Source: RMDB libraries RFM100 and RFMREP, as collected in RNAgym. An RNA of 177 nucleotides, treated with 2A3 and DMS and read out base by base. The reactions ran in a buffer of 150 mM KOAc, 10 mM MgCl2 and 150 mM bicine (pH 8.5), at 24 C.

RNA sequence: GGGAACGACUCGAGUAGAGUCGAAAAACCAUGGGCAGAGAGUGCCGCGUGCACACGCGCGUAGGCUUCCCCCGCAAGUCACUGUUAGCCCGCCAAGAAGCGACCCCUCCGGGGCGAGCUGAGCGGCGUCUUGAGGCAGAUUCGUCUGCCUCAAGACAAAAGAAACAACAACAACAAC
Reactivity to 2A3 in 0.01 (KOAc 150mM, MgCl2 10mM, bicine 150mM(pH8.5), 24C), signal-to-noise 3, nucleotides 027 to 126: a000c030c000a080u170g010g000g010c150a070g030a020g020a020g200u070g030c000c000g000c010g030u050g000c030a060c010a020c270g010c010g020c030g060u060a200g000g020c000u030u030c000c000c000c010c010g010c060a080a060g010u090c040a000c100u030g030u080u040a020g000c000c050c030g000c010c000a050a060g110a100a000g040c010g010a130c000c050c000c010u030c130c220g040g000g000g010c010g010a010g000c000u060g000a030g000c020g000g000c010
Reactivity to DMS in 0.01 (KOAc 150mM, MgCl2 10mM, bicine 150mM(pH8.5), 24C), signal-to-noise 3, nucleotides 027 to 126: a070c040c010a140u040g020g010g000c010a120g050a080g000a060g000u010g000c000c000g010c000g010u000g000c040a100c300a060c300g000c000g020c040g030u000a120g040g020c010u010u000c000c010c000c020c040g000c150a100a130g010u010c070a060c090u010g020u000u020a130g030c030c010c000g040c010c030a090a160g000a160a020g000c020g000a300c300c010c000c000u020c240c130g000g020g000g000c000g000a210g010c010u000g000a110g010c160g020g010c030